The record gives the reactivity of an RNA of 207 nucleotides to DMS and 2A3. For 2A3, 3,542 sequencing reads were counted. The reactions ran in a buffer of 150 mM KOAc, 10 mM MgCl2 and 150 mM bicine (pH 8.5), at 24 C. Reactivities are given for positions 27 through 156.

[RMDB]
RNA sequence: GGGAACGACUCGAGUAGAGUCGAAAAGAAGACCAAUUGUUUUUAACAAUUGUAUACGCAUUACGACAAGUUGUGAACAGAAUUUCUUAGAGAAUUUCUUUUCUUCACAACCAUAGGCGUACUAUAAUGCGGACACAUAGGGUGUCCUGGGAACGGAGGGGAAUGAUGUAUUCGUGCGUCGUUCUCCAAAAGAAACAACAACAACAAC
Reactivity to DMS in 0.01 (KOAc 150mM, MgCl2 10mM, bicine 150mM(pH8.5), 24C), signal-to-noise 3, nucleotides 027 to 156: g020a150a060g010a160c040c020a070a070u000u010g030u010u000u020u000u000a040a110c010a030a040u000u010g010u020a070u000a050c020g000c000a060u010u000a060c050g010a110c080a120a120g010u000u010g020u010g020a030a050c060a060g000a020a030u010u010u000c010u000u000a190g010a160g010a020a030u000u000u010c010u000u000u000u020c040u010u000c010a020c010a010a010c000c030a070u000a120g000g010c010g020u000a080c170u010a090u000a020a060u000g000c020g010g000a050c020a010c020a180u010a140g010g020g000u000g000u010c010c010u010g010g000g000a080a110c060g020g000a250
Reactivity to 2A3 in 0.01 (KOAc 150mM, MgCl2 10mM, bicine 150mM(pH8.5), 24C), signal-to-noise 5, nucleotides 027 to 156: g070a020a010g040a020c020c020a000a010u010u010g040u010u080u090u150u250a080a010c020a010a010u000u010g020u010a080u020a030c010g000c020a050u060u090a050c050g030a040c070a080a030g000u010u000g000u010g000a040a000c030a080g000a010a010u000u000u010c020u080u210a110g030a050g020a210a000u000u030u070c000u010u110u050u040c010u000u000c000a000c000a000a010c010c010a010u070a070g080g000c010g010u010a010c020u050a040u070a100a060u100g080c030g010g010a000c010a000c010a050u260a170g250g040g010u020g000u010c010c010u020g030g010g050a090a070c050g040g040a040